[RMDB]
RNA sequence: GGGAACGACUCGAGUAGAGUCGAAAAAGAGUGAAUGCCCAGCUGAAUGGUCCAGUGUAGCUGCAACUAACCAUCACAGUUUGAGAUGGGAAUAAAUGCUUGGCAGGUAUACUACUACUCUCCUUCUCAGACUGAAUAUUGUAAAAGUCAAUGGACAAUCUUGAUAAGCGUUCGCGCUUAUCAAGAUAAAAGAAACAACAACAACAAC
Reactivity to 2A3 in 0.01 (KOAc 150mM, MgCl2 10mM, bicine 150mM(pH8.5), 24C), signal-to-noise 3, nucleotides 027 to 156: a000g070a020g040u090g050a150a030u070g040c010c030c020a020g020c020u070g050a090a100u080g020g040u070c070c070a040g040u030g020u100a050g050c070u080g010c010a010a050c030u090a050a060c030c020a040u120c080a030c020a040g040u020u050u040g080a060g000a010u070g020g060g020a000a030u100a060a100a030u080g020c030u060u020g050g000c020a000g000g040u080a090u010a090c030u000a010c000u030a040c000u000c000u000c020c010u040u010c020u020c000a000g000a030c010u000g020a130a010u160a120u100u090g080u100a040a060a040a060g060u050c060a060a120u050g010g000a030c030a040
Reactivity to DMS in 0.01 (KOAc 150mM, MgCl2 10mM, bicine 150mM(pH8.5), 24C), signal-to-noise 2, nucleotides 027 to 156: a060g000a070g010u010g010a130a130u000g030c030c040c040a150g010c030u000g020a060a080u000g020g000u000c010c040a060g000u000g020u010a050g000c050u010g030c010a080a100c050u010a160a130c060c030a050u000c070a170c020a050g000u010u000u010g010a100g030a060u010g000g000g000a080a140u010a070a100a090u000g000c070u000u000g010g030c060a030g000g010u000a090u010a070c060u000a040c040u000a060c040u010c060u010c000c020u000u010c010u010c000a040g000a090c010u000g010a070a090u000a090u000u000g000u010a020a070a070a190g020u000c000a010a090u000g000g030a070c040a100

Conditions: 150 mM KOAc, 10 mM MgCl2 and 150 mM bicine (pH 8.5), 24 C. An RNA of 207 nucleotides, treated with 2A3 and DMS and read out base by base. For DMS, 3,762 sequencing reads were counted. Reactivities are rounded to 0.1 and cut off at 0 and 3. For DMS the reverse transcriptase was MarathonRT. For 2A3, 1,889 sequencing reads were counted.